RNA sequence: GGGAACGACUCGAGUAGAGUCGAAAAUCAUUGAGAUGCUGGGCGCUAUGGUCGUCCUCCUCCGGCUGACCUCCUUCUCAGCUGCGGACCGGCGCCGCACAGGCGGCAUCUCAGCUUCGUGUGCAAAAAAAGAAUGGUCGGUUCGCCGACCAUUCAACCGAUAUAGUAGGUUCGCCUACUAUAUCGGAAAAGAAACAACAACAACAAC
Reactivity to DMS in 0.01 (KOAc 150mM, MgCl2 10mM, bicine 150mM(pH8.5), 24C), signal-to-noise 3, nucleotides 027 to 156: u010c080a100u000u000g010a010g020a010u000g020c010u000g030g020g010c010g020c030u000a040u010g050g030u010c010g010u000c060c020u000c030c020u000c040c010g000g030c010u000g000a040c060c120u010c140c090u000u010c080u010c010a040g020c000u010g000c100g040g000a030c010c020g010g000c020g010c000c020g020c090a100c130a120g030g030c040g000g010c000a000u000c000u000c000a040g010c080u000u000c130g010u000g030u000g000c050a000a000a080a130a130a120a220g000a050a020u000g000g020u000c000g020g020u000u010c300g020c020c000g000a030c000c000a000u000u000c000a060a110
Reactivity to 2A3 in 0.01 (KOAc 150mM, MgCl2 10mM, bicine 150mM(pH8.5), 24C), signal-to-noise 3, nucleotides 027 to 156: u170c050a050u030u070g000a000g000a000u000g000c010u030g020g040g000c010g010c030u080a160u300g040g000u010c030g040u040c040c030u050c000c000u000c010c000g000g000c010u010g010a030c020c070u110c010c040u230u130c050u010c030a010g010c010u030g030c120g020g000a000c000c020g010g000c010g000c000c010g010c010a040c020a000g160g000c000g010g010c010a000u010c000u000c000a000g010c030u160u160c110g140u070g010u040g110c070a040a090a030a030a000a020a000g000a010a000u010g000g000u000c000g010g010u010u060c180g050c070c000g000a000c000c000a000u000u010c000a000a000
Description: Source: RMDB library M2RFPK, as collected in RNAgym. Chemical mapping of a 207-nucleotide RNA with DMS and 2A3.